[RMDB]
RNA sequence: GGGAACGACUCGAGUAGAGUCGAAAAAGUUCAUGACAUCCGGUUCCAAGAAUAGUCGUCGUGCUUCCUUGUAUUGCCAGUCUUGGGGUAUUGGAUAUUUCUGAAAGCACAUCUCGAUUUAUCAGUACCGUCCUAUAUACUUCGGUAUAUAGGACGGAAAAGAAACAACAACAACAAC
Reactivity to DMS in 0.01 (KOAc 150mM, MgCl2 10mM, bicine 150mM(pH8.5), 24C), signal-to-noise 3, nucleotides 027 to 126: a080g030u030u020c060a060u010g010a090c270a060u020c010c040g030g000u000u000c030c030a070a070g000a060a100u020a030g000u010c030g000u000c050g000u020g000c040u010u000c020c040u010u030g000u020a050u020u030g000c030c020a090g010u020c030u020u030g030g020g000g020u000a030u010u020g000g010a060u010a050u000u010u010c030u000g000a050a060a080g000c060a070c050a070u040c050u020c010g030a060u020u010u020a080u020c020a030g010u030a220
Reactivity to 2A3 in 0.01 (KOAc 150mM, MgCl2 10mM, bicine 150mM(pH8.5), 24C), signal-to-noise 9, nucleotides 027 to 126: a000g090u100u080c050a060u120g040a020c010a080u040c020c030g020g020u080u010c040c010a030a010g080a080a080u150a060g090u070c050g020u030c050g040u080g020c030u070u070c040c000u040u070g070u120a120u080u170g080c030c030a020g030u030c040u070u080g050g020g000g020u090a090u020u070g030g020a020u010a070u070u130u040c050u040g070a100a050a030g080c050a050c020a140u020c070u010c040g100a120u060u130u170a150u090c040a010g020u040a040

This 177-nucleotide RNA was probed chemically with DMS and 2A3. DMS (dimethyl sulfate) methylates the pairing face of unpaired adenines and cytosines. Conditions: 150 mM KOAc, 10 mM MgCl2 and 150 mM bicine (pH 8.5), 24 C. The 2A3 profile rests on 7,605 reads.